RNA sequence: GGGAACGACUCGAGUAGAGUCGAAAAGAUAUGGAUCCCAGCUCUUUUGACGACUGUUCGGAAACGAACACUCGAUAAGAGCGGGAUCCUAAGUCAAAACAUGAUCGCCGUUCGCGGCGAUCAUGAAGCUCACAGUAAAGUUCGCUUUACUGUGAGCAAAAGAAACAACAACAACAAC
Reactivity to 2A3 in 0.01 (KOAc 150mM, MgCl2 10mM, bicine 150mM(pH8.5), 24C), signal-to-noise 2, nucleotides 027 to 126: g020a000u020a010u100g000g000a010u000c000c000c050a040g000c010u000c000u080u300u270u300g200a050c020g010a020c010u000g020u020u000c000g010g010a030a020a020c000g000a000a010c010a010c010u010c010g130a160u110a300a000g020a010g000c010g000g000g000a000u000c000c000u000a030a000g010u000c020a030a000a160a110c000a000u020g020a000u010c000g000c050c030g050u080u090c300g010c000g120g000c000g000a000u020c000a000u000g010a000a010
Reactivity to DMS in 0.01 (KOAc 150mM, MgCl2 10mM, bicine 150mM(pH8.5), 24C), signal-to-noise 2, nucleotides 027 to 126: g010a010u000a110u010g000g000a000u000c000c000c000a110g030c000u000c000u000u010u000u010g040a250c060g000a000c100u000g020u000u000c000g010g010a040a040a060c010g010a010a000c000a000c070u000c000g020a100u000a040a010g020a010g000c010g020g000g000a000u000c000c000u000a000a070g000u010c010a120a110a140a260c000a000u010g000a010u010c000g030c000c000g020u010u000c290g020c000g000g020c000g000a000u000c000a010u010g000a060a140